[RMDB]
This 177-nucleotide RNA was probed chemically with DMS and 2A3. The reactions ran in a buffer of 150 mM KOAc, 10 mM MgCl2 and 150 mM bicine (pH 8.5), at 24 C. Values cover nucleotides 27 to 126. For 2A3, 8,654 sequencing reads were counted.
RNA sequence: GGGAACGACUCGAGUAGAGUCGAAAAGUGGAAACCGUGCGGACCACGCCGCUGCCGCCGAUUCGUGCCCUGGUGUGCAAUGCCGGCCUGCAGGUGGUGUCGGGCAUCGCGUUCACCGACGACGGUGACGCACCAGCUAAUUCGUUAGCUGGUGCGUAAAAGAAACAACAACAACAAC
Reactivity to DMS in 0.01 (KOAc 150mM, MgCl2 10mM, bicine 150mM(pH8.5), 24C), signal-to-noise 4, nucleotides 027 to 126: g010u010g020g000a100a070a080c110c010g030u010g020c110g000g020a110c050c020a050c050g000c020c030g000c050u000g000c030c180g000c030c010g000a100u030u010c070g020u000g000c040c040c050u030g010g020u030g000u030g000c050a050a020u000g010c050c010g000g000c030c020u030g010c110a060g010g020u010g000g000u020g020u030c040g000g010g020c020a020u000c080g010c000g000u030u020c010a030c020c020g010a140c160g020a060c020g000g000u010g000
Reactivity to 2A3 in 0.01 (KOAc 150mM, MgCl2 10mM, bicine 150mM(pH8.5), 24C), signal-to-noise 7, nucleotides 027 to 126: g080u070g040g040a120a040a020c050c030g010u100g030c070g040g030a060c010c010a020c030g020c020c010g000c020u050g030c010c010g010c010c000g040a080u060u100c040g030u090g040c010c010c060u060g000g020u020g020u030g050c010a020a020u060g020c010c010g010g030c010c020u100g020c060a100g060g140u140g030g030u120g190u110c090g050g020g000c010a040u040c020g010c010g050u080u070c010a010c030c020g060a100c050g010a010c020g030g010u010g020